[RMDB]
RNA sequence: GGGAACGACUCGAGUAGAGUCGAAAACCUGGUUUAGGGUUCCAGGCUAGCCCUAUCUAUCGGUCGAGAUGCGAGCCCUUAAGCUCAAAUUGAGUGGCUGAGUUAGUGGUGAACGUAUCCCUAUGUUAAAACGGUAGCUGCUUCGGCAGCUACCGAACAAUUGAUCGCAGUUCGCUGCGAUCAAUUGAAAAGAAACAACAACAACAAC
Reactivity to 2A3 in 0.01 (KOAc 150mM, MgCl2 10mM, bicine 150mM(pH8.5), 24C), signal-to-noise 1, nucleotides 027 to 156: c000c000u010g030g020u000u030u100a020g000g000g030u020u070c000c010a010g050g000c010u020a010g010c000c000c000u000a000u000c020u050a190u060c010g010g030u010c020g020a030g000a100u020g000c010g010a000g000c030c000c040u040u240a080a010g000c000u010c020a010a070a050u020u040g020a030g060u250g060g000c000u000g020a000g020u000u020a070g000u100g210g020u010g020a070a010c040g030u070a070u130c000c020c010u030a060u090g100u070u110a080a090a020a040c010g010g000u000a000g000c010u030g010c040u070u080c260g130g000c000a000g000c010u000a000c000c000g000a000a000
Reactivity to DMS in 0.01 (KOAc 150mM, MgCl2 10mM, bicine 150mM(pH8.5), 24C), signal-to-noise 1, nucleotides 027 to 156: c020c020u010g020g030u010u000u000a050g030g020g010u010u000c000c030a100g010g020c040u000a300g040c010c000c010u000a020u010c050u000a080u000c050g110g080u000c010g010a300g010a050u010g010c300g000a140g060c000c000c150u000u000a140a110g020c000u000c030a080a240a110u000u000g010a160g040u000g000g010c030u000g000a060g000u000u000a060g000u000g030g000u000g010a100a100c070g050u000a100u000c000c010c000u000a230u000g000u000u000a080a060a070a130c030g070g010u000a000g000c010u020g020c000u000u000c300g060g020c020a010g000c010u000a000c010c000g020a000a010
This 207-nucleotide RNA was probed chemically with 2A3 and DMS.
The RNA was probed in 150 mM KOAc, 10 mM MgCl2 and 150 mM bicine (pH 8.5) at 24 C.
The data come from the RNA Mapping Database (RMDB), library M2RFPK.
The 2A3 profile rests on 1,327 reads.